[RMDB]
RNA sequence: GGGAACGACUCGAGUAGAGUCGAAAAUUAUUUGGAUGCGUUAUGUCGAGUAUCUAUAUUACUAGAAACUUAAACUUACUUAAUUCUUACCAGUAGGUUUCAAUGACAAUUGGUUAUAGGAAGAAGAGAAUAUCACAUUAAGAAUCUAAAGUCCUAACAUGGAGUCAUCAUUCGUGAUGACUCCAUGAAAAGAAACAACAACAACAAC
Reactivity to DMS in 0.01 (KOAc 150mM, MgCl2 10mM, bicine 150mM(pH8.5), 24C), signal-to-noise 1, nucleotides 027 to 156: u000u010a120u000u000u000g020g000a050u010g030c000g010u010u010a060u010g010u010c110g020a150g020u000a130u000c010u000a050u000a220u010u000a100c070u000a100g010a090a090a040c010u000u000a010a040a070c000u000u000a000c000u000u050a030a200u000u000c090u000u000a070c030c060a130g020u000a020g030g050u010u000u010c080a110a110u000g010a090c100a050a130u000u000g010g010u000u000a120u020a050g020g010a070a050g000a140a080g030a120g010a060a090u000a130u000c050a020c040a070u000u000a030a050g010a010a050u000c070u000a040a070a100g020u000c000c020u000a080a270
Reactivity to 2A3 in 0.01 (KOAc 150mM, MgCl2 10mM, bicine 150mM(pH8.5), 24C), signal-to-noise 3, nucleotides 027 to 156: u130u060a070u020u050u070g020g000a020u040g060c040g020u070u090a030u040g070u060c070g020a020g010u040a030u000c050u070a100u030a040u200u100a050c010u010a020g130a190a120a000c040u040u030a010a060a040c010u020u020a060c000u070u040a100a190u300u110c030u100u100a110c040c010a010g010u010a000g030g000u000u030u060c070a060a120u080g090a110c050a080a140u060u080g040g010u070u050a050u010a070g020g050a060a020g020a070a020g020a050g020a030a010u130a020u140c020a000c000a020u100u130a090a050g050a090a000u020c010u050a110a000a000g040u000c010c020u000a020a030
This 207-nucleotide RNA was probed chemically with DMS and 2A3. DMS adducts were read by reverse transcription with MarathonRT. The reactions ran in a buffer of 150 mM KOAc, 10 mM MgCl2 and 150 mM bicine (pH 8.5), at 24 C. It was measured as part of the RMDB library OK3TST. The 2A3 profile rests on 1,079 reads.